[RMDB]
RNA sequence: GGGAACGACUCGAGUAGAGUCGAAAAGGUGAAGUUAACGGCGUUCUGGCAUGGUGUAGGCUAAGCGGUACGGCUGGAGAUGUGCUUAUGCCCACCUCUUCAAACGCACUUAUAACAGAUGCUUAUGGGUGUAGGGCUUUAGCUGAAAGACUGCUGGGUUAUGUCAUCGAUUCGUCGAUGACAUAACAAAAGAAACAACAACAACAAC
Reactivity to DMS in 0.01 (KOAc 150mM, MgCl2 10mM, bicine 150mM(pH8.5), 24C), signal-to-noise 2, nucleotides 027 to 156: g060g010u010g000a080a070g000u000u010a080a140c050g010g000c040g020u000u000c030u010g030g000c000a050u010g030g040u000g010u000a090g030g030c020u020a060a100g010c020g000g000u010a080c020g020g000c030u010g020g010a080g020a060u010g020u000g030c030u000u000a060u010g080c010c040c020a030c030c050u020c010u010u000c060a060a050a100c150g010c010a050c040u000u000a110u000a050a070c060a200g020a140u010g010c100u000u000a090u000g010g030g020u000g040u000a100g010g020g000c020u000u000u000a090g000c040u010g000a120a100a080g010a080c070u020g000c020u000g010g000
Reactivity to 2A3 in 0.01 (KOAc 150mM, MgCl2 10mM, bicine 150mM(pH8.5), 24C), signal-to-noise 5, nucleotides 027 to 156: g070g010u070g040a030a040g030u060u100a090a010c060g050g000c040g020u040u030c050u050g010g000c050a040u060g030g060u040g050u090a020g030g000c020u030a050a020g020c030g030g030u070a040c050g030g000c030u020g030g010a040g000a030u060g040u050g030c010u060u060a040u140g000c000c000c000a010c030c020u070c000u120u090c040a070a080a050c060g030c010a010c010u040u070a080u050a210a030c050a060g090a210u070g010c020u040u080a040u090g030g000g000u080g020u060a160g040g030g000c000u020u030u040a010g000c000u020g040a040a020a010g050a030c030u050g030c020u030g020g060
An RNA of 207 nucleotides, treated with DMS and 2A3 and read out base by base. For 2A3, 3,515 sequencing reads were counted. The DMS profile rests on 3,478 reads. The RNA was probed in 150 mM KOAc, 10 mM MgCl2 and 150 mM bicine (pH 8.5) at 24 C. For DMS the reverse transcriptase was MarathonRT.